Chemical mapping of a 207-nucleotide RNA with 2A3 and DMS. The reactions ran in a buffer of 150 mM KOAc, 10 mM MgCl2 and 150 mM bicine (pH 8.5), at 24 C. For DMS the reverse transcriptase was MarathonRT.
RNA sequence: GGGAACGACUCGAGUAGAGUCGAAAAAAUCACCUGGAGACCGUGGAGGACAUUCAGCAUCUACAAGAGUGUUUGAGGCUUUGUGUCCUUGACCUUUCGCACAACAAGCUGAGUGACCCGGAGAUCCUGAGCAUUCUGGAAAGCAUGCCCGAUUUGAAUCAUAUGAGCAUUUCGAUGCUCAUAUGAUAAAAGAAACAACAACAACAAC
Reactivity to 2A3 in 0.01 (KOAc 150mM, MgCl2 10mM, bicine 150mM(pH8.5), 24C), signal-to-noise 5, nucleotides 027 to 156: a020a000u120c040a040c030c010u030g020g010a050g020a060c030c030g040u160g060g050a080g040g040a060c000a010u000u000c000a000g000c000a070u050c030u140a100c060a150a030g050a030g080u110g050u090u140u160g020a010g010g000c020u100u150u160g130u100g030u070c000c000u010u030g030a030c020c000u020u110u080c060g050c030a050c010a140a060c020a180a040g000c010u010g000a000g020u020g030a110c010c020c010g000g000a030g020a020u020c000c010u020g000a010g010c010a030u060u030c020u030g030g050a120a060a020g010c000a010u040g010c000c020c020g050a040u070u060u200g110a100
Reactivity to DMS in 0.01 (KOAc 150mM, MgCl2 10mM, bicine 150mM(pH8.5), 24C), signal-to-noise 3, nucleotides 027 to 156: a060a070u000c010a120c050c010u010g020g010a130g010a120c030c020g030u000g040g000a150g010g020a130c020a040u000u000c050a030g050c010a090u000c030u010a070c020a060a100g010a050g000u000g020u000u010u020g020a060g020g000c030u000u010u000g030u000g000u000c010c010u000u000g020a020c040c020u010u000u000c050g000c010a120c090a060a150c070a080a130g030c020u010g010a060g010u010g000a170c010c010c020g000g000a280g010a080u000c020c010u010g010a100g010c020a080u000u030c030u000g030g000a120a090a090g030c030a040u000g000c000c040c020g000a220u000u000u010g010a160